[RMDB]
RNA sequence: GGGAACGACUCGAGUAGAGUCGAAAAAACAUUGCCAAAUUGCGGGAAAGUCUUAAUGACUUCGCUACCAAGUUCAAUAGCGUACUCUGAAUGGCCGGCUUAAUACACCGGGUAGGGUUAUAAUGCGAAGUAUGUUACAAUAGGCAACCUGCAGCCAUCCAGUAACAAAGUUCGCUUUGUUACUGGAAAAAGAAACAACAACAACAAC
Reactivity to DMS in 0.01 (KOAc 150mM, MgCl2 10mM, bicine 150mM(pH8.5), 24C), signal-to-noise 2, nucleotides 027 to 156: a020a050c070a180u000u000g000c060c040a060a110a020u010u000g090c000g000g010g010a040a070a080g020u000c010u000u000a080a090u010g000a050c000u000u000c020g030c010u000a080c030c020a100a150g020u010u000c080a080a080u030a130g020c090g050u000a090c070u000c120u000g010a110a070u000g000g020c020c010g020g040c000u000u000a100a040u000a160c300a000c000c020g000g020g040u000a050g050g000g040u000u000a120u010a040a060u000g020c000g000a040a050g020u020a040u000g010u020u010a040c030a100a130u000a040g040g010c000a080a300c010c020u000g020c000a100g020c110c030a170
Reactivity to 2A3 in 0.01 (KOAc 150mM, MgCl2 10mM, bicine 150mM(pH8.5), 24C), signal-to-noise 3, nucleotides 027 to 156: a000a010c130a120u140u090g050c010c010a110a050a000u080u030g000c000g000g020g040a050a110a000g010u000c000u030u080a050a060u300g000a000c000u000u000c010g010c000u000a010c020c050a010a000g000u010u030c030a050a100u090a210g090c070g110u090a080c100u090c040u090g040a040a020u030g000g000c000c000g010g020c000u000u020a020a010u020a000c020a000c000c010g000g000g000u040a210g090g050g000u010u000a020u000a030a010u030g000c000g000a000a000g010u020a010u010g100u110u260a030c010a020a010u000a020g000g000c000a020a000c000c000u000g000c000a030g020c010c000a040